[RMDB]
RNA sequence: GGGAACGACUCGAGUAGAGUCGAAAAGGAAAGGAUGUUCCGUGGCCGUAAAUGCAGGUUCACAGCGCUUCGUAUCGCGGCAAUAUCGCCAGUGGUGCUGUCGUGAUGCGGUCUUCGCAUGGACCGCCAAGCCAAUUAUUUUCGAAUAAUUGGCUUGAAAAGAAACAACAACAACAAC
Reactivity to DMS in 0.01 (KOAc 150mM, MgCl2 10mM, bicine 150mM(pH8.5), 24C), signal-to-noise 9, nucleotides 027 to 126: g000g000a050a060a080g010g010a080u010g010u000u000c010c020g020u010g010g010c030c040g010u020a050a080a080u010g010c050a080g020g010u000u000c030a050c120a100g010c030g010c300u010u010c030g020u000a020u000c030g010c020g000g000c020a030a050u010a030u000c030g000c100c150a150g020u020g010g010u000g010c070u000g010u000c010g010u000g000a020u000g000c000g000g000u020c040u010u010c090g020c080a230u000g000g000a010c000c010g010c030
Reactivity to 2A3 in 0.01 (KOAc 150mM, MgCl2 10mM, bicine 150mM(pH8.5), 24C), signal-to-noise 6, nucleotides 027 to 126: g070g030a080a040a010g110g060a090u110g080u090u020c030c010g020u080g050g010c020c030g050u100a040a070a050u120g030c070a090g020g000u030u040c020a020c040a070g000c010g000c020u050u060c020g010u020a010u030c010g000c000g000g000c000a000a020u070a030u080c050g070c160c100a160g060u200g190g020u030g010c020u010g000u010c010g000u010g010a010u020g000c000g000g010u010c050u070u060c030g010c030a020u030g000g010a000c000c000g000c010